[RMDB]
RNA sequence: GGGAACGACUCGAGUAGAGUCGAAAAACUGGAUCGGCAGCGACCCGCGUAUUGCUUUUUGGUUGUCACACACGUCGGCUGUCACACUCGCGAGGUCAACAGCGAGGACAGCGGCCGGAACGGCUGCGAAUGUGAGCGUUUUCGAACGCUCACAUUCAAAAGAAACAACAACAACAAC
Reactivity to 2A3 in 0.01 (KOAc 150mM, MgCl2 10mM, bicine 150mM(pH8.5), 24C), signal-to-noise 2, nucleotides 027 to 126: a010c040u050g050g010a130u090c070g050g000c010a000g020c010g050a080c010c000c000g050c050g020u030a160u060u210g150c080u060u100u030u030u120g160g010u130u090g050u060c000a020c000a010c010a010c070g010u030c000g050g010c010u040g020u100c010a040c010a050c060u000c020g000c000g060a190g040g160u150c190a160a090c000a200g010c010g000a000g000g050a000c020a010g000c010g020g000c020c000g040g080a080a020c000g050g000c040u040g020c050
Reactivity to DMS in 0.01 (KOAc 150mM, MgCl2 10mM, bicine 150mM(pH8.5), 24C), signal-to-noise 3, nucleotides 027 to 126: a080c070u030g000g010a060u050c060g000g000c020a060g020c050g000a070c050c030c010g000c040g040u030a090u020u000g020c040u000u000u000u040u000g020g000u000u010g000u020c050a180c180a170c100a100c050g010u010c020g000g000c020u000g000u000c060a180c130a300c000u000c010g010c050g020a160g000g000u010c200a120a070c150a160g000c000g010a030g000g030a070c140a120g010c030g010g030c020c030g000g000a040a070c060g000g000c040u000g000c270
Structure probing data (2A3 and DMS) for a 177-nucleotide construct. 2A3 adducts were read by reverse transcription with SuperScript II with manganese. For DMS, 4,498 sequencing reads were counted. Reactivities are rounded to 0.1 and cut off at 0 and 3. Source: RMDB library OK1LIB, as collected in RNAgym.